[RMDB]
RNA sequence: GGGAACGACUCGAGUAGAGUCGAAAAUGGAUCUGCAACAACCCCAUAUAUCCGCAGAUCCUAAGGAUGUAUGGCCAACUGAUCCGAGAGGAUCUACAUUAAGGCGAAGGUCAAAUCUACGUUAAUACCGACCUGAAGCCGAAGGUAUUAACGUACACCUGGUGAUACUCUUCGGAGUAUCACCAGGAAAAGAAACAACAACAACAAC
Reactivity to DMS in 0.01 (KOAc 150mM, MgCl2 10mM, bicine 150mM(pH8.5), 24C), signal-to-noise 1, nucleotides 027 to 156: u000g010g000a040u020c000u010g000c040a100a140c260a050a180c070c000c000c000a120u000a110u020a090u020c010c090g030c020a000g000a000u000c010c010u000a050a110g000g000a080u000g000u020a050u000g000g040c000c030a210a160c140u000g010a030u000c040c010g000a300g000a300g000g000a080u000c000u000a120c070a100u010u010a060a070g020g000c120g010a200a120g000g020u020c060a010a170a110u000c030u000a030c020g000u000u000a000a050u000a040c030c010g000a280c040c000u030g020a110a150g020c080c010g010a090a220g000g000u000a000u000u020a020a020c000g000u000a010c270a020
Reactivity to 2A3 in 0.01 (KOAc 150mM, MgCl2 10mM, bicine 150mM(pH8.5), 24C), signal-to-noise 3, nucleotides 027 to 156: u040g000g000a000u000c000u010g000c020a100a030c020a070a120c150c010c020c050a030u210a030u020a050u130c060c080g000c000a010g010a010u000c000c000u020a120a050g070g020a050u070g020u160a040u100g060g000c000c000a060a060c100u060g000a000u000c000c000g030a030g010a000g090g010a000u000c000u040a050c050a110u110u140a080a050g010g000c050g060a060a020g020g020u050c040a070a000a040u090c090u110a020c000g000u000u000a000a000u000a000c000c000g040a030c000c030u080g080a050a000g050c050c010g020a010a010g010g000u000a000u010u000a020a000c010g000u010a010c030a010
An RNA of 207 nucleotides, treated with DMS and 2A3 and read out base by base. For 2A3 the reverse transcriptase was SuperScript II with manganese. For DMS, 1,363 sequencing reads were counted. For DMS the reverse transcriptase was MarathonRT. Values cover nucleotides 27 to 156.